Notes: Chemical mapping of a 177-nucleotide RNA with DMS and 2A3. The reactions ran in a buffer of 150 mM KOAc, 10 mM MgCl2 and 150 mM bicine (pH 8.5), at 24 C. The DMS profile rests on 1,212 reads. 2A3 adducts were read by reverse transcription with SuperScript II with manganese.
RNA sequence: GGGAACGACUCGAGUAGAGUCGAAAAUAGGGUGGGUCUCUCCGCCAAUGCUCUCAAGCUGAAGUACGCCAUAUCUUUUGGCGAAAAAUAUGAGCAUGGAGCCAUCUUUAACCGAUGCCCUGAGUGCAAUUACGGACCAGUUCGCUGGUCCGUAAUUAAAAGAAACAACAACAACAAC
Reactivity to DMS in 0.01 (KOAc 150mM, MgCl2 10mM, bicine 150mM(pH8.5), 24C), signal-to-noise 2, nucleotides 027 to 126: u000a010g020g020g010u000g000g020g000u000c150u000c040u000c020c040g020c100c140a170a040u010g010c010u000c030u000c300a110a130g030c130u000g000a090a070g010u010a210c020g030c030c020a000u000a080u000c110u000u010u020u000g000g010c000g000a000a050a100a030a110u000a070u010g000a030g030c010a020u000g010g010a030g020c040c040a010u000c010u000u030u010a110a150c170c140g000a090u000g020c020c000c060u000g000a140g000u000g000c150
Reactivity to 2A3 in 0.01 (KOAc 150mM, MgCl2 10mM, bicine 150mM(pH8.5), 24C), signal-to-noise 1, nucleotides 027 to 126: u280a020g010g000g000u030g010g050g070u060c040u000c010u030c200c000g040c060c020a030a090u020g050c010u000c000u000c100a100a010g000c120u140g120a120a010g000u020a050c000g000c020c000a020u010a180u240c160u130u290u160u070g000g010c000g040a050a020a010a000a000u120a060u090g000a010g010c000a020u070g010g020a000g040c020c000a000u010c000u020u070u060a100a070c070c050g070a070u100g030c000c040c000u070g060a070g150u110g000c020
Reactivities are rounded to 0.1 and cut off at 0 and 3. DMS (dimethyl sulfate) methylates the pairing face of unpaired adenines and cytosines.